[RMDB]
RNA sequence: GGGAACGACUCGAGUAGAGUCGAAAAGGACACCCCUUCGGGGGUGUCCAAAACUAAAACAUUUGCGAAGCUUGAUACGGCAAAACGAGCAAAAAGAAUAAGAAAGGGCAUUGUUCGCAAUGCCCAACCAUUAAAUUAAGUUCGCUUAAUUUAAUGGAAAAGAAACAACAACAACAAC
Reactivity to DMS in 0.01 (KOAc 150mM, MgCl2 10mM, bicine 150mM(pH8.5), 24C), signal-to-noise 2, nucleotides 027 to 126: g000g010a010c000a010c010c030c000c000u000u010c220g030g060g010g000g040u000g010u000c000c010a000a000a090a100c050u000a060a060a120a140c120a120u010u010u010g010c010g010a140a120g000c050u000u000g010a110u000a060c090g000g000c070a020a030a070a090c090g010a140g030c020a050a020a050a030a110g000a060a050u010a080a090g010a130a110a120g000g000g030c000a000u000u000g010u020u020c170g020c020a010a020u000g000c000c000c010a020a020
Reactivity to 2A3 in 0.01 (KOAc 150mM, MgCl2 10mM, bicine 150mM(pH8.5), 24C), signal-to-noise 2, nucleotides 027 to 126: g020g000a010c000a010c020c000c050c020u010u140c150g020g010g010g100g000u000g000u000c000c000a000a000a000a000c020u010a010a010a010a030c020a120u030u010u130g000c020g090a100a050g000c020u080u050g060a130u190a300c030g050g000c080a000a120a020a070c060g030a000g060c030a020a000a010a060a040g120a070a060u240a140a040g110a180a020a020g000g000g020c000a010u000u020g030u080u100c150g000c070a020a020u000g010c000c000c000a000a040
Annotation: Conditions: 150 mM KOAc, 10 mM MgCl2 and 150 mM bicine (pH 8.5), 24 C. Chemical mapping of a 177-nucleotide RNA with DMS and 2A3. In probing experiments dimethyl sulfate is read out at A N1 and C N3, which are open when not base-paired.